[RMDB]
RNA sequence: GGGAACGACUCGAGUAGAGUCGAAAAAGUGAUGAGCAUUACUAGCUGGAGCCCCAAAGAGGCACGUGUGUGUGUGUGUGUGUGUAUCUGUAUCCUUGUCUGUGCAUGCACACGUGUGUCUGGGAGUAGAGCGAUACAAUUUCGAUUGUAUCGCUCUAAAAGAAACAACAACAACAAC
Reactivity to 2A3 in 0.01 (KOAc 150mM, MgCl2 10mM, bicine 150mM(pH8.5), 24C), signal-to-noise 4, nucleotides 027 to 126: a010g140u120g030a100u090g010a020g050c050a070u080u130a180c040u080a030g040c030u040g050g040a040g030c000c000c000c000a040a170a000g060a010g040g000c000a000c000g000u000g000u000g000u000g000u000g000u010g010u000g030u030g010u010g010u020g020u020a120u140c080u080g100u070a060u080c030c000u090u080g030u050c030u030g060u080g010c000a020u020g000c000a010c000a000c000g000u020g000u000g120u000c000u000g020g000g020a070g050u050
Reactivity to DMS in 0.01 (KOAc 150mM, MgCl2 10mM, bicine 150mM(pH8.5), 24C), signal-to-noise 2, nucleotides 027 to 126: a070g020u020g010a070u000g000a080g010c080a080u000u030a060c110u010a140g010c010u000g000g010a130g000c050c000c000c060a070a130a040g010a030g020g010c010a010c010g030u010g000u010g000u000g000u000g000u000g010u000g010u000g000u000g030u020g020u020a070u000c060u000g010u030a040u010c000c070u010u000g030u000c080u000g030u000g010c000a010u000g010c000a000c000a000c000g020u000g010u000g020u000c010u030g010g000g020a110g020u010

Structure probing data (2A3 and DMS) for a 177-nucleotide construct.
It was measured as part of the RMDB libraries RFM100 and RFMREP.
2A3 adducts were read by reverse transcription with SuperScript II with manganese.
Reactivities are given for positions 27 through 126.
The RNA was probed in 150 mM KOAc, 10 mM MgCl2 and 150 mM bicine (pH 8.5) at 24 C.